[RMDB]
RNA sequence: GGGAACGACUCGAGUAGAGUCGAAAACCCCAAAACCUUACACUGAGAGCAUUUAGCCUGAUUACUCUUUAAAUCAAAUCAGGCAAUAGAGAGAAACACGAGAGGUGAAAACCCCACAGCAUUCUGAAACGGUUACUCGGGUUCGCCCGAGUAACAACUAGUAUAUCUCGUUCGCGAGAUAUACUAGAAAAGAAACAACAACAACAAC
Reactivity to 2A3 in 0.01 (KOAc 150mM, MgCl2 10mM, bicine 150mM(pH8.5), 24C), signal-to-noise 3, nucleotides 027 to 156: c010c000c020c010a050a080a030a090c060c040u180u170a040c070a060c140u140g060a010g000a000g040c020a030u000u020u070a020g010c020c000u010g000a010u010u050a050c020u020c010u150u300u160a060a070a040u190c090a000a000a020u010c000a010g010g000c000a000a000u000a000g020a000g010a000g030a020a110a020c050a010c100g080a080g010a030g070g020u020g000a040a040a040a050c020c030c040c020a030c030a060g110c030a070u060u090c040u080g050a060a090a060c050g060g000u000u000a000c020u000c000g000g040g000u020u030c170g030c010c000c000g000a000g000u000a000a000c000a000a000
Reactivity to DMS in 0.01 (KOAc 150mM, MgCl2 10mM, bicine 150mM(pH8.5), 24C), signal-to-noise 1, nucleotides 027 to 156: c030c010c020c020a070a130a220a120c180c070u000u000a130c080a130c100u010g000a030g000a080g020c040a300u000u000u000a060g000c010c000u010g000a030u000u000a060c050u000c040u030u000u010a060a100a060u000c050a010a060a080u000c000a000g000g020c000a040a040u000a020g000a190g000a100g020a150a120a040c030a030c040g000a080g020a090g030g000u000g010a090a090a150a030c000c000c020c030a070c040a040g030c000a130u000u000c030u000g010a110a030a120c190g010g010u000u000a020c000u000c000g010g010g030u000u000c300g030c030c000c000g000a010g010u000a000a010c010a050a100